[RMDB]
RNA sequence: GGGAACGACUCGAGUAGAGUCGAAAAUUUCGAACCCCAGUUAGCGUACUGGUUGGCGCUGAUUUCGAUGUGAUUGGGGUUACGGGCCAGCGAUUGCGCAGCAUGGCUGUCAAAGCUCUGCACAUCCAACGCCUUAGCCUUUCGAGGCUAAGGCGUUAAAAGAAACAACAACAACAAC
Reactivity to DMS in 0.01 (KOAc 150mM, MgCl2 10mM, bicine 150mM(pH8.5), 24C), signal-to-noise 2, nucleotides 027 to 126: u000u000u010c120g010a150a080c050c000c000c030a060g000u000u000a030g000c020g010u030a110c090u030g020g010u000u000g020g000c040g010c020u000g000a100u000u000u010c170g010a100u010g020u000g020a070u000u000g010g020g000g000u000u010a030c280g000g020g020c000c060a130g000c060g030a140u010u000g000c090g040c090a120g020c300a100u010g020g040c020u000g020u010c030a120a200a130g000c000u000c000u000g010c000a070c060a020u000c000c090

This 177-nucleotide RNA was probed chemically with DMS. Source: RMDB library OK2TST, as collected in RNAgym. DMS (dimethyl sulfate) methylates the pairing face of unpaired adenines and cytosines. Conditions: 150 mM KOAc, 10 mM MgCl2 and 150 mM bicine (pH 8.5), 24 C.